[RMDB]
RNA sequence: GGGAACGACUCGAGUAGAGUCGAAAAUUUCGACAGUUUUUUUAGGCGGUGGACGUAUAUAGUUUACUUAAUCGUUUACUAUACGGUGGAGUACUAAUACUAUUUCACUGUCGUGCUCGCGGUUGAUCUAGACCCAAAUUUUCGAAUUUGGGUCUAGAAAAGAAACAACAACAACAAC
Reactivity to 2A3 in 0.01 (KOAc 150mM, MgCl2 10mM, bicine 150mM(pH8.5), 24C), signal-to-noise 3, nucleotides 027 to 126: u110u100u010c000g030a020c020a080g030u020u020u000u000u040u140u300a060g000g000c010g010g010u030g000g040a020c020g030u000a010u000a010u000a080g030u030u160u020a010c000u000u000a060a010u010c010g040u020u010u090a230c160u120a080u070a140c000g000g030u030g040g000a000g000u000a000c000u000a000a050u030a050c020u080a160u030u030u000c000a000c010u010g000u030c010g020u010g010c000u000c030g090c070g020g040u010u070g020a040u030